[RMDB]
RNA sequence: GGGAACGACUCGAGUAGAGUCGAAAAGAUAUGGAUCCUGUGAGAGUGAUGACCAAUCUCGGAAACGAGAUUGCAAGCUCACACACAUGGAUCCUAAGUCAAAGUCUAACAGUUCGCUGUUAGACAACGGUCUAUUCAACUUCGGUUGAAUAGACCGAAAAGAAACAACAACAACAAC
Reactivity to 2A3 in 0.01 (KOAc 150mM, MgCl2 10mM, bicine 150mM(pH8.5), 24C), signal-to-noise 1, nucleotides 027 to 126: g020a010u060a050u190g000g000a000u000c020c010u020g010u000g010a220g000a000g040u070g100a300u120g030a050c000c030a030a000u000c000u000c000g040g030a040a070a070c010g000a030g010a000u000u000g000c010a050a120g000c000u010c010a040c000a000c010a000c030a160u300g010g000a000u000c000c010u030a090a000g020u020c060a120a050a030g010u000c000u000a010a020c000a000g060u110u130c280g150c230u000g040u000u000a010g010a020c000a010a000
Reactivity to DMS in 0.01 (KOAc 150mM, MgCl2 10mM, bicine 150mM(pH8.5), 24C), signal-to-noise 2, nucleotides 027 to 126: g040a070u000a300u020g000g000a010u000c000c010u000g030u000g020a160g000a180g090u000g000a020u020g000a300c300c000a000a000u030c000u000c000g000g010a300a150a250c020g010a020g000a040u000u000g000c050a040a120g010c160u000c000a010c030a110c010a020c010a030u010g080g020a020u000c000c000u000a010a020g000u000c010a170a150a150g000u020c010u000a000a030c000a020g000u000u000c300g010c010u000g000u000u000a010g000a000c000a040a040

Structure probing data (2A3 and DMS) for a 177-nucleotide construct. It was measured as part of the RMDB library TTRDES. As a SHAPE reagent, 2A3 marks flexible, mostly unpaired nucleotides at the ribose 2'-OH.